[RMDB]
This 177-nucleotide RNA was probed chemically with 2A3. The reactions ran in a buffer of 150 mM KOAc, 10 mM MgCl2 and 150 mM bicine (pH 8.5), at 24 C. For 2A3, 697 sequencing reads were counted. Values cover nucleotides 27 to 126. For 2A3 the reverse transcriptase was SuperScript II with manganese.
RNA sequence: GGGAACGACUCGAGUAGAGUCGAAAACUUCCAUCGAUGGGUGCAUGGUUUAUGGCAGAGUGUGAUGCCAUGAACUCAUCAUGGUCAUGCAUGUGUGCAUGGUUAGAUGACCAUCAGCAAACAUGUUAGCCAGUCACAGUUUCGACUGUGACUGGCUAAAAGAAACAACAACAACAAC
Reactivity to 2A3 in 0.01 (KOAc 150mM, MgCl2 10mM, bicine 150mM(pH8.5), 24C), signal-to-noise 2, nucleotides 027 to 126: c020u070u000c000c020a020u000c100g010a000u000g010g000g030u040g080c000a020u060g000g140u030u080u270a080u200g220g040c090a060g070a060g190u240g060u110g240a000u090g000c000c000a000u000g000a000a000c000u000c020a000u000c000a000u000g010g000u060c050a140u170g010c040a000u000g000u000g000u000g000c000a000u010g000g040u000u020a170g060a300u300g020a060c000c000a000u080c030a010g000c040a060a040a000c020a000u000g000u030u130